[RMDB]
RNA sequence: GGGAACGACUCGAGUAGAGUCGAAAAAAAAGCAGCAUUAUGUCCUAUACAGGGACAAGAGUUUACUUUUCUUGCCGUACUAGUAACUCUUUGUUUACCCAAAGGAGGCAAGAUGCUUUAUUGUGGAGCCUCUCUCUUAUUUCGAUAAGAGAGAGGCAAAAGAAACAACAACAACAAC
Reactivity to 2A3 in 0.01 (KOAc 150mM, MgCl2 10mM, bicine 150mM(pH8.5), 24C), signal-to-noise 1, nucleotides 027 to 126: a000a000a000a030g110c090a000g000c010a000u020u070a060u170g030u030c020c000u040a020u040a160c120a050g000g000g030a000c000a000a000g000a000g020u070u040u050a000c000u030u000u000u020c040u040u060g140c020c020g020u030a030c020u030a020g010u030a020a010c000u000c000u080u070u030g060u050u110u120a160c000c000c000a000a050a040g140g020a020g000g030c000a010a030g030a020u020g000c000u050u230u190a160u170u230g100u130g090g020a070
Reactivity to DMS in 0.01 (KOAc 150mM, MgCl2 10mM, bicine 150mM(pH8.5), 24C), signal-to-noise 2, nucleotides 027 to 126: a050a050a070a120g010c120a050g000c020a070u000u000a160u000g020u000c000c010u000a060u000a120c280a190g000g000g000a030c010a020a010g000a010g010u000u000u000a020c000u000u000u000u000c000u000u000g000c140c190g000u000a040c030u000a020g020u010a000a030c000u000c000u000u000u020g020u000u000u010a200c010c010c020a040a110a130g000g000a040g000g020c020a040a300g030a030u010g010c020u000u000u010a100u040u020g000u020g000g000a300